Chemical mapping of a 177-nucleotide RNA with 2A3 and DMS.
Values cover nucleotides 27 to 126.
DMS adducts were read by reverse transcription with MarathonRT.
For DMS, 1,609 sequencing reads were counted.
It was measured as part of the RMDB library OK1LIB.
Conditions: 150 mM KOAc, 10 mM MgCl2 and 150 mM bicine (pH 8.5), 24 C.
For 2A3 the reverse transcriptase was SuperScript II with manganese.
RNA sequence: GGGAACGACUCGAGUAGAGUCGAAAAGAGAAGUAAACUGUUAGACGCCAGCGGCUUGACCCGCUGUGGCCGCGGCGGCCUAGUUGAGACUGAAACGGCGGGUUAGAGCUCGGAGAGACCGAGCAGACGAUGGUGAUACGUUCGCGUAUCACCAUCGAAAAGAAACAACAACAACAAC
Reactivity to 2A3 in 0.01 (KOAc 150mM, MgCl2 10mM, bicine 150mM(pH8.5), 24C), signal-to-noise 2, nucleotides 027 to 126: g140a000g050a120a000g050u170a120a100a060c070u050g120u270u140a050g020a020c010g000c000c030a110g020c000g010g000c000u050u090g030a170c000c000c000g000c000u000g000u010g000g000c000c000g010c000g000g000c020g010g000c070c030u170a050g010u000u150g070a050g070a050c120u090g000a010a000a070c000g000g000c020g010g000g030u000u030a020g010a000g000c000u000c000g040g000a210g020a020g040a110c000c000g000a000g000c000a000g000a000
Reactivity to DMS in 0.01 (KOAc 150mM, MgCl2 10mM, bicine 150mM(pH8.5), 24C), signal-to-noise 1, nucleotides 027 to 126: g000a230g010a130a200g010u030a030a000a040c060u060g000u010u060a040g000a060c010g000c010c000a050g150c000g010g060c000u000u000g000a040c000c010c080g000c000u000g000u010g000g000c000c000g000c000g010g000c040g000g010c180c000u000a090g050u010u010g010a050g000a300c050u000g000a020a030a010c050g030g040c000g060g000g030u020u040a030g000a100g000c000u000c000g020g000a200g040a170g060a160c000c000g030a000g010c000a040g000a180